Description
Source: RMDB library TTRINS, as collected in RNAgym. Chemical mapping of a 177-nucleotide RNA with 2A3 and DMS. For 2A3, 9,365 sequencing reads were counted. DMS adducts were read by reverse transcription with MarathonRT. Conditions: 150 mM KOAc, 10 mM MgCl2 and 150 mM bicine (pH 8.5), 24 C.
[RMDB]
RNA sequence: GGGAACGACUCGAGUAGAGUCGAAAAGAUAUGGAGACAUGGAACCACCGAAGCACACAUAUCUACCCGGUCGGAAACGACCGAGUAGCCGAGUGUGUGCUUCGAAGUGAAACAUGUCUCCUAAGUCCUAUCUACCCUAGUUCGCUAGGGUAGAUAGAAAAGAAACAACAACAACAAC
Reactivity to 2A3 in 0.01 (KOAc 150mM, MgCl2 10mM, bicine 150mM(pH8.5), 24C), signal-to-noise 3, nucleotides 027 to 126: g030a020u110a060u230g010g010a010g020a000c010a000u010g010g010a060a040c010c000a010c000c010g010a010a000g000c020a000c020a010c010a040u060a070u140c000u000a000c020c010c000g010g010u010c000g040g000a090a080a110c020g020a000c000c000g000a000g000u000a000g050c220c160g170a300g070u130g000u000g000u010g010c000u000u000c000g000a010a000g000u010g020a010a020a000c010a000u000g010u000c000u010c010c000u000a010a010g000u000c000
Reactivity to DMS in 0.01 (KOAc 150mM, MgCl2 10mM, bicine 150mM(pH8.5), 24C), signal-to-noise 4, nucleotides 027 to 126: g000a110u020a300u010g000g000a020g010a020c000a000u000g010g010a090a130c030c000a000c010c010g020a020a010g010c000a010c000a010c000a010u000a120u000c000u000a000c000c010c000g000g020u010c000g030g010a100a140a160c000g020a010c000c000g000a000g010u000a010g020c300c170g030a190g010u000g020u010g010u000g010c000u000u000c010g000a020a030g020u010g000a300a030a060c010a000u000g000u000c000u000c000c000u000a020a110g000u000c050